An RNA of 177 nucleotides, treated with 2A3 and DMS and read out base by base. Conditions: 150 mM KOAc, 10 mM MgCl2 and 150 mM bicine (pH 8.5), 24 C. In probing experiments dimethyl sulfate is read out at A N1 and C N3, which are open when not base-paired.
RNA sequence: GGGAACGACUCGAGUAGAGUCGAAAAUAUCGCGGCGGAAACGGUCCUUGUCGAGCUUGUCGUUGGUGGUGAUAUCCCAAAGACGAGCCGAAUCCGGCGAGAUUUCAUCGGCAACGACGAUGCGCAAUAAUGGUAAUGCGUUCGCGCAUUACCAUUAAAAAGAAACAACAACAACAAC
Reactivity to 2A3 in 0.01 (KOAc 150mM, MgCl2 10mM, bicine 150mM(pH8.5), 24C), signal-to-noise 1, nucleotides 027 to 126: u240a010u060c030g000c010g070g000c010g020g050a040a090a010c030g030g020u000c000c010u020u050g040u030c020g000a040g010c060u030u060g000u000c000g030u010u030g080g300u010g050g000u020g060a010u010a020u090c020c000c000a030a030a000g080a020c060g010a040g000c000c000g060a080a080u060c140c020g020g020c000g030a030g010a000u040u060u040c030a030u020c010g060g020c020a020a060c020g020a010c060g010a040u180g020c030g000c040a010a100
Reactivity to DMS in 0.01 (KOAc 150mM, MgCl2 10mM, bicine 150mM(pH8.5), 24C), signal-to-noise 3, nucleotides 027 to 126: u010a080u010c050g000c040g000g030c010g040g000a050a090a090c050g000g000u000c040c040u000u010g030u000c050g000a140g010c030u010u000g020u000c000g000u010u000g000g000u000g000g010u000g010a080u000a080u010c020c000c010a080a080a100g000a080c170g000a150g020c000c020g020a040a130u000c180c040g020g000c050g000a020g010a050u000u010u000c030a020u000c000g010g020c040a030a060c060g010a020c010g000a030u010g020c090g010c090a050a130

For DMS, 3,527 sequencing reads were counted.